The data come from the RNA Mapping Database (RMDB), library TTRDES. An RNA of 177 nucleotides, treated with 2A3 and DMS and read out base by base. For DMS the reverse transcriptase was MarathonRT. For 2A3, 2,467 sequencing reads were counted.

RNA sequence: GGGAACGACUCGAGUAGAGUCGAAAAGAUAUGGAAUCUUGUGAUGAGCAACAGCACGGUUCGGAAACGAACCGUGACAUGCUCGCACACUGGAUUCCUAAGUCAAAGGUCCACUUCGGUGGACCAAGAUGGACUAGUGGUUCGCCACUAGUCCAUCAAAAGAAACAACAACAACAAC
Reactivity to 2A3 in 0.01 (KOAc 150mM, MgCl2 10mM, bicine 150mM(pH8.5), 24C), signal-to-noise 1, nucleotides 027 to 126: g020a020u100a000u130g030g010a010a010u000c020u080u030g010u030g070a300u100g030a020g010c010a000a200c080a180g170c000a010c040g000g030u000u000c010g000g070a070a080a050c020g000a000a000c000c000g010u000g040a010c000a000u010g010c010u010c000g020c000a150c010a000c050u090g000g000a030u000u000c000c000u010a070a020g040u010c070a120a050a220g000g000u000c000c000a000c000u050u080c300g200g000u000g000g000a000c010c000a000a010
Reactivity to DMS in 0.01 (KOAc 150mM, MgCl2 10mM, bicine 150mM(pH8.5), 24C), signal-to-noise 2, nucleotides 027 to 126: g010a050u000a300u000g070g000a010a000u000c000u000u000g000u000g000a180u000g010a000g000c020a030a130c250a250g000c000a000c010g010g010u000u010c000g000g000a080a090a250c010g010a010a010c040c000g010u000g030a000c050a220u010g000c010u000c000g030c120a130c000a010c300u000g010g010a000u000u000c000c000u000a020a150g000u000c040a100a140a230g010g000u000c000c000a000c000u000u030c190g000g040u000g010g020a040c000c000a010a010
2A3 adducts were read by reverse transcription with SuperScript II with manganese.